[RMDB]
The record gives the reactivity of an RNA of 207 nucleotides to 2A3 and DMS.
RNA sequence: GGGAACGACUCGAGUAGAGUCGAAAAUGAGAGAAUAUGUUUCUGUUGCUGUCAUCACCCAAGUUUGUGGCACUUUGUUAUGGCAGCCCCAAGAAACUAAUACAAUGAGGGAGUGAGUAGGAAAGAACAUCAGAAUCAGCCCUGAGGCUUGUCAGGAGUUUUAGCAUAAUUUCGAUUAUGCUAAAACAAAAGAAACAACAACAACAAC
Reactivity to 2A3 in 0.01 (KOAc 150mM, MgCl2 10mM, bicine 150mM(pH8.5), 24C), signal-to-noise 7, nucleotides 027 to 156: u120g020a030g010a010g040a070a070u150a080u210g010u000u010u000c010u010g030u030u040g010c000u010g010u000c000a000u000c010a020c030c080c090a020a030g030u080u140u170g180u130g090g010c060a010c030u030u030u050g020u020u030a000u000g010g000c010a000g000c000c020c010c000a050a030g000a000a010a000c010u020a030a020u100a080c060a030a100u130g010a050g010g030g000a030g050u070g010a020g010u050a020g010g050a040a060a030g040a030a030c030a060u130c040a020g100a120a040u080c030a030g040c010c000c010u030g020a050g050g040c060u090u090g050u080c030a020g030g040a060
Reactivity to DMS in 0.01 (KOAc 150mM, MgCl2 10mM, bicine 150mM(pH8.5), 24C), signal-to-noise 3, nucleotides 027 to 156: u010g000a120g020a110g010a110a100u000a090u000g010u000u000u000c020u010g030u000u000g000c010u000g020u010c010a080u010c090a090c040c040c020a080a170g010u000u010u000g030u000g030g010c080a110c060u000u010u010g020u000u000a050u000g010g000c010a060g000c010c030c050c050a070a060g020a080a030a080c020u000a070a130u000a060c090a090a080u020g010a090g000g040g000a080g040u000g010a100g000u000a050g010g010a050a050a080g000a070a060c030a090u000c050a090g000a100a080u010c050a100g000c050c030c010u010g010a070g040g000c060u000u010g010u000c030a110g020g020a240
It was measured as part of the RMDB library OK3TST. For DMS, 8,214 sequencing reads were counted.